The record gives the reactivity of an RNA of 207 nucleotides to 2A3. The 2A3 profile rests on 1,305 reads. The reactions ran in a buffer of 150 mM KOAc, 10 mM MgCl2 and 150 mM bicine (pH 8.5), at 24 C.

[RMDB]
RNA sequence: GGGAACGACUCGAGUAGAGUCGAAAAGGGACUCCGGAACUCCUUGCAUGCUGGGGACGAAGCCGCCCCCGGGCGCUCCCCUCGAUCCACCUUCGAGGGGGUUCACACCUCCAGGCGGCGGGCCGGCUACUCUUCUUUCCCUUUCCUCGUCUUCCCGGACAACAUGUUAGUUCGCUAACAUGUUGUCAAAAGAAACAACAACAACAAC
Reactivity to 2A3 in 0.01 (KOAc 150mM, MgCl2 10mM, bicine 150mM(pH8.5), 24C), signal-to-noise 2, nucleotides 027 to 156: g000g020g010a030c070u020c050c020g020g010a120a070c080u070c050c040u110u260g040c050a120u170g030c050u080g030g030g000g010a040c050g050a040a020g060c040c010g020c030c030c010c050c050g020g010g000c030g010c030u080c000c020c010c010u000c000g000a020u030c080c100a090c030c140u030u020c010g010a020g020g010g010g000g000u120u130c040a070c020a050c080c010u050c000c040a050g060g080c000g000g000c000g010g020g000c000c010g020g000c020u110a150c020u060c020u180u050c030u020u030u050c010c000c040u000u040u030c010c000u010c000g000u020c000u030u000c000c020c000g010